[RMDB]
RNA sequence: GGGAACGACUCGAGUAGAGUCGAAAACGCCAUUGCCAAUCAGCUGUCAUUAACCACGCAAUACCGUACAGAGGUGCUAAAUUACCGUGAAAACCACUUUAAAAAUUGGUCACUCGGAGGAGGCACCCCCUCGCUGGAUGUUCGCAUCCAGCGAGGGAAAAGAAACAACAACAACAAC
Reactivity to 2A3 in 0.01 (KOAc 150mM, MgCl2 10mM, bicine 150mM(pH8.5), 24C), signal-to-noise 1, nucleotides 027 to 126: c040g050c000c070a000u000u160g100c100c000a060a150u080c010a030g000c000u000g010u000c000a050u070u130a030a030c000c000a040c000g000c000a000a090u010a150c030c030g060u060a000c000a000g130a010g130g000u020g000c000u000a070a070a070u150u110a070c040c000g000u000g050a060a060a060a060c000c000a000c020u020u110u190a060a160a000a000a100u120u080g010g010u030c120a030c110u000c000g000g010a000g000g000a000g010g000c000a000c000c000